[RMDB]
RNA sequence: GGGAACGACUCGAGUAGAGUCGAAAAGAGUCUGCCUUCCAUACCUGGAAUUCAUCCUAGGGCACCUUCACCUCCAAGGGCAACUUCUACUCCCGGGAAUAUUCCCUGGAGUUUAGGAGAUGAUAGCCCAAAUUGAAUUAUUCGUAAUUCAAUUUGGAAAAGAAACAACAACAACAAC
Reactivity to DMS in 0.01 (KOAc 150mM, MgCl2 10mM, bicine 150mM(pH8.5), 24C), signal-to-noise 7, nucleotides 027 to 126: g010a090g010u000c050u000g010c030c020u000u010c030c040a080u000a100c120c080u000g010g000a080a120u010u000c110a070u000c020c030u000a100g010g010g000c040a050c050c020u000u000c040a100c040c020u000c030c050a100a100g010g000g020c020a100a130c010u000u000c010u000a030c010u000c000c000c100g010g010g010a040a240u010a140u010u000c000c000c000u000g000g000a020g000u000u010u000a000g030g000a010g000a100u000g010a110u000a080g010c050
Reactivity to 2A3 in 0.01 (KOAc 150mM, MgCl2 10mM, bicine 150mM(pH8.5), 24C), signal-to-noise 4, nucleotides 027 to 126: g060a000g040u040c040u040g020c000c000u060u020c030c010a040u070a180c000c030u030g030g040a060a040u120u100c020a070u060c060c030u060a090g000g040g020c020a040c000c020u080u100c040a070c030c020u010c020c020a030a030g000g000g020c010a040a030c010u010u010c000u000a000c010u000c000c010c010g000g000g040a110a080u270a210u300u080c000c000c000u000g010g000a000g000u000u050u010a000g000g000a020g000a000u090g030a040u120a060g010c000

Chemical mapping of a 177-nucleotide RNA with DMS and 2A3.
DMS adducts were read by reverse transcription with MarathonRT.